[RMDB]
RNA sequence: GGGAACGACUCGAGUAGAGUCGAAAAAAAGGAUGGUUUAUCUGAUCUGAAAGACAGUAUUGAUGAAAUCAUUUCUUCACUGGAAGAUGCAGCACAGUAGAAAGAAGGUGGUUAUGUGAAGAAAAUAACCUAGAUCCUAGUUCGCUAGGAUCUAGGUAAAAGAAACAACAACAACAAC
Reactivity to DMS in 0.01 (KOAc 150mM, MgCl2 10mM, bicine 150mM(pH8.5), 24C), signal-to-noise 4, nucleotides 027 to 126: a050a030a040g000g000a000u010g000g000u000u000u000a030u030c000u020g020a070u030c010u000g010a140a110a080g010a180c060a010g020u030a070u010u010g000a040u010g000a060a020a030u000c050a020u000u000u010c010u000u000c020a060c060u010g000g000a100a110g010a060u010g000c030a070g000c060a050c070a070g000u020a060g020a090a080a060g010a070a070g000g020u000g000g000u000u000a040u010g010u030g000a050a040g000a050a020a040a060u030a080
Reactivity to 2A3 in 0.01 (KOAc 150mM, MgCl2 10mM, bicine 150mM(pH8.5), 24C), signal-to-noise 5, nucleotides 027 to 126: a000a000a000g130g000a030u040g010g010u000u010u050a020u010c010u030g030a040u000c010u030g140a240a090a030g100a050c010a010g060u090a070u140u180g070a050u080g070a010a020a050u030c010a020u010u030u060c000u020u040c030a050c040u020g020g040a090a020g040a110u100g060c000a000g040c010a030c020a050g120u180a050g140a060a120a000g090a060a040g070g050u060g010g030u090u090a060u090g060u010g010a000a090g030a020a070a020a020u140a030